This 177-nucleotide RNA was probed chemically with 2A3 and DMS. The data come from the RNA Mapping Database (RMDB), library 15KREP. DMS adducts were read by reverse transcription with MarathonRT. Values cover nucleotides 27 to 126.
RNA sequence: GGGAACGACUCGAGUAGAGUCGAAAAUUGGUGGUGCUCCUACAUGGUUUAAUGCGUUGCGUGACUUUACGUUAAAGGGUUAUGUUCUUGCUACCAUUAUUGUGUUUCUGUGUGCUGUACUGAUGUAUCCUUAACCAUGGUUCGCCAUGGUUAAGGAAAAAGAAACAACAACAACAAC
Reactivity to 2A3 in 0.01 (KOAc 150mM, MgCl2 10mM, bicine 150mM(pH8.5), 24C), signal-to-noise 1, nucleotides 027 to 126: u030u060g030g000u030g000g000u050g000c020u050c020c010u050a080c030a090u120g000g030u050u090u050a060a000u040g050c010g080u040u010g020c040g020u050g020a020c000u020u020u090a030c030g070u050u060a100a020a060g080g000g000u000u040a060u130g000u020u010c020u040u020g010c000u010a040c000c010a020u030u050a060u040u140g020u020g010u050u060u000c020u030g040u010g000u010g010c010u010g000u030a050c030u040g060a060u040g050u050a030
Reactivity to DMS in 0.01 (KOAc 150mM, MgCl2 10mM, bicine 150mM(pH8.5), 24C), signal-to-noise 3, nucleotides 027 to 126: u010u010g010g020u000g010g020u000g020c060u000c030c030u000a080c140a090u000g020g010u010u000u000a080a070u010g010c070g020u010u000g010c090g020u000g000a050c030u000u000u020a050c060g020u010u000a080a070a140g000g010g010u000u000a070u000g010u000u000c030u000u000g010c030u000a060c030c040a030u010u010a060u010u000g010u010g000u000u000u000c040u000g020u000g010u000g020c020u000g020u000a080c070u000g000a070u000g010u000a150